An RNA of 207 nucleotides, treated with 2A3 and DMS and read out base by base. Reactivities are given for positions 27 through 156. The data come from the RNA Mapping Database (RMDB), library OK3TST. For DMS, 2,092 sequencing reads were counted.
[RMDB]
RNA sequence: GGGAACGACUCGAGUAGAGUCGAAAAGAAGCACAUUGCCGACUAUUGCAGAAGAUGAACCUGCCCAGUUGAACUCGGCUAUAGUUCGCAUGGCAGGAUUGAAUGACUUGAACACGGUUCAAGCACCGGAUUCAUCUAAUCUGCAAAACCUGGCCAACUGGAAGCAGUAUUUCGAUACUGCUUCCAGAAAAGAAACAACAACAACAAC
Reactivity to 2A3 in 0.01 (KOAc 150mM, MgCl2 10mM, bicine 150mM(pH8.5), 24C), signal-to-noise 2, nucleotides 027 to 156: g050a060a020g030c070a050c030a150u070u210g010c010c010g040a050c030u180a080u120u000g000c010a000g000a030a000g000a030u000g000a030a050c000c010u010g030c010c000c030a090g030u190u230g070a000a000c010u010c050g100g000c020u030a070u100a120g000u000u000c010g040c040a030u030g000g000c010a000g010g000a000u050u100g010a020a070u050g070a100c000u000u000g000a000a000c160a020c210g300g030u000u000c000a010a010g020c000a020c010c020g100g040a080u030u000c000a000u000c000u000a080a030u000c000u000g000c000a000a000a000a000c020c020u060g030g000c000c020a040a060
Reactivity to DMS in 0.01 (KOAc 150mM, MgCl2 10mM, bicine 150mM(pH8.5), 24C), signal-to-noise 1, nucleotides 027 to 156: g020a120a080g010c100a110c030a210u000u000g050c020c010g050a150c060u010a090u010u000g000c000a040g000a070a060g000a090u000g030a040a130c030c010u000g010c050c020c080a290g050u030u000g000a020a000c030u000c060g040g030c150u000a130u010a130g020u000u010c030g000c000a250u000g050g040c010a010g050g010a050u000u010g020a120a100u000g020a060c010u000u010g010a040a030c020a110c160g110g060u000u000c060a060a120g010c080a050c040c020g020g030a270u010u000c010a020u010c000u000a040a120u000c000u010g000c020a020a030a040a040c030c030u010g010g000c000c000a060a150